[RMDB]
RNA sequence: GGGAACGACUCGAGUAGAGUCGAAAAUUACAUAAGUCUAACACCUUGUUUCGGACUAACAAGGGCGCAUGGAGGAUGGCCGAGCCUCCAUAGUUAGACGUCCGAGAACCAGCCGAAAUGAAAAAGACAUGCCUAUUUACUUCGGUAAAUAGGCAUGAAAAGAAACAACAACAACAAC
Reactivity to DMS in 0.01 (KOAc 150mM, MgCl2 10mM, bicine 150mM(pH8.5), 24C), signal-to-noise 3, nucleotides 027 to 126: u020u040a130c120a080u040a070a090g020u000c040u010a040a030c050a220c070c030u000u000g020u010u020u020c050g010g000a060c080u000a050a060c060a030a050g000g020g010c130g000c100a010u000g000g010a040g010g000a080u010g010g050c010c040g000a160g000c000c000u010c000c000a000u000a020g010u000u010a030g000a060c000g040u010c040c030g010a140g020a130a160c130c040a090g000c020c020g010a070a100a040u040g000a020a080a060a050a110g000a200
Reactivity to 2A3 in 0.01 (KOAc 150mM, MgCl2 10mM, bicine 150mM(pH8.5), 24C), signal-to-noise 3, nucleotides 027 to 126: u180u110a040c040a070u180a110a040g010u020c000u030a000a020c030a040c050c000u000u010g030u060u030u110c200g110g080a140c040u010a000a030c060a020a020g040g000g000c030g020c030a000u000g000g000a000g020g010a010u130g110g000c020c020g030a060g030c000c000u000c000c000a000u020a010g000u010u020a040g000a040c000g010u000c030c020g100a050g020a110a030c020c010a030g010c000c010g060a030a090a040u150g070a060a090a060a020a000g090a030